[RMDB]
RNA sequence: GGGAACGACUCGAGUAGAGUCGAAAAAGCAUCGGUGGUACGCCACCGAUGCAAAUGAAUGAUGACAAAAUGUUUCAGUCCCAAAUGAUACAUACUGAUUAUACCAUUAUAUUUAUCCUGACAUUAAGUCCUGGUAUGCUUUCGAGCAUACCAGGACAAAAGAAACAACAACAACAAC
Reactivity to 2A3 in 0.01 (KOAc 150mM, MgCl2 10mM, bicine 150mM(pH8.5), 24C), signal-to-noise 1, nucleotides 027 to 126: a000g050c000a000u000c000g000g010u000g000g000u000a000c270g050c040c020a030c000c000g010a000u000g010c000a010a020a020u020g040a000a000u090g020a000u060g020a000c020a000a000a000a080u050g070u130u030u000c020a020g010u000c020c040c000a070a090a090u110g000a000u040a090c050a050u050a030c130u050g000a040u020u020a130u040a160c050c030a000u100u010a050u050a000u170u160u040a090u020c100c000u030g110a130c020a070u260u140a090a000
Source information: An RNA of 177 nucleotides, treated with 2A3 and read out base by base. It was measured as part of the RMDB library RFM100. The reactions ran in a buffer of 150 mM KOAc, 10 mM MgCl2 and 150 mM bicine (pH 8.5), at 24 C. The 2A3 profile rests on 585 reads.